[RMDB]
RNA sequence: GGGAACGACUCGAGUAGAGUCGAAAAAAGCUGGAGUACGGUAGGGGCAGAGGGAAUUUCCGGUGGAGCGGUGAAAUGCGUAGAGAUCGGAAAGAACACCAACGGCGAAAGCACUCUGCUGGGCCGACGGUGCUAAGGAGUUCGCUCCUUAGCACCGAAAAGAAACAACAACAACAAC
Reactivity to DMS in 0.01 (KOAc 150mM, MgCl2 10mM, bicine 150mM(pH8.5), 24C), signal-to-noise 2, nucleotides 027 to 126: a170a060g000c020u010g000g000a210g040u000a020c040g000g000u000a190g000g000g000g000c000a080g000a020g030g000g050a150a070u000u000u000c010c000g010g010u000g000g000a150g000c000g000g000u030g010a130a040a220u050g040c020g000u030a070g020a300g000a010u000c120g000g010a020a000a020g100a070a040c130a010c130c170a010a300c230g020g000c050g030a060a080a100g000c040a190c040u010c130u050g000c020u000g000g000g000c000c030g010a120
Reactivity to 2A3 in 0.01 (KOAc 150mM, MgCl2 10mM, bicine 150mM(pH8.5), 24C), signal-to-noise 2, nucleotides 027 to 126: a000a000g040c080u040g040g010a010g000u140a120c010g020g020u040a100g010g000g010g020c000a020g000a040g020g000g030a000a060u000u000u040c020c000g040g000u040g010g000a020g020c030g000g000u040g230a090a090a000u100g000c080g010u130a000g020a010g000a240u040c030g000g020a010a000a000g050a070a010c000a020c050c000a080a010c000g020g010c000g140a130a160a000g000c010a020c070u240c110u050g000c000u020g030g060g000c000c000g020a020
This 177-nucleotide RNA was probed chemically with DMS and 2A3. DMS adducts were read by reverse transcription with MarathonRT. As a SHAPE reagent, 2A3 marks flexible, mostly unpaired nucleotides at the ribose 2'-OH. For DMS, 1,259 sequencing reads were counted.